Source information:
The record gives the reactivity of an RNA of 207 nucleotides to 2A3. The data come from the RNA Mapping Database (RMDB), library VIROID. Conditions: 150 mM KOAc, 10 mM MgCl2 and 150 mM bicine (pH 8.5), 24 C. For 2A3 the reverse transcriptase was SuperScript II with manganese. Reactivities are given for positions 27 through 156.
RNA sequence: GGGAACGACUCGAGUAGAGUCGAAAACGGAGCAAGCAUGACCAGAGUAGAGCCAGAGACAUACGUGGGUCAAAAGUGGGGCGUAAAGCAAGGACGGUCCAAGGGUGAGUCGACCUCCCUCGGCACAAGGACGAGCCUGGUUUUGAGUGGGGGAGGACCGCAGUAUAUCGUUCGCGAUAUACUGCGGAAAAGAAACAACAACAACAAC
Reactivity to 2A3 in 0.01 (KOAc 150mM, MgCl2 10mM, bicine 150mM(pH8.5), 24C), signal-to-noise 1, nucleotides 027 to 156: c040g050g010a010g010c020a080a040g000c030a040u080g120a130c040c030a080g000a010g120u130a020g010a010g020c020c000a050g000a000g000a100c000a010u200a090c080g010u140g040g000g000u110c000a020a020a020a020g030u060g010g030g000g000c020g040u070a030a030a030g010c050a000a050g070g000a050c110g070g030u030c030c070a010a040g120g000g010u010g010a040g030u040c000g010a110c000c000u000c010c020c000u020c000g020g010c070a020c070a090a180g010g030a050c120g000a040g030c000c000u060g010g040u090u070u040u070g130a060g000u120g070g000g010g030g000a030g020g020a010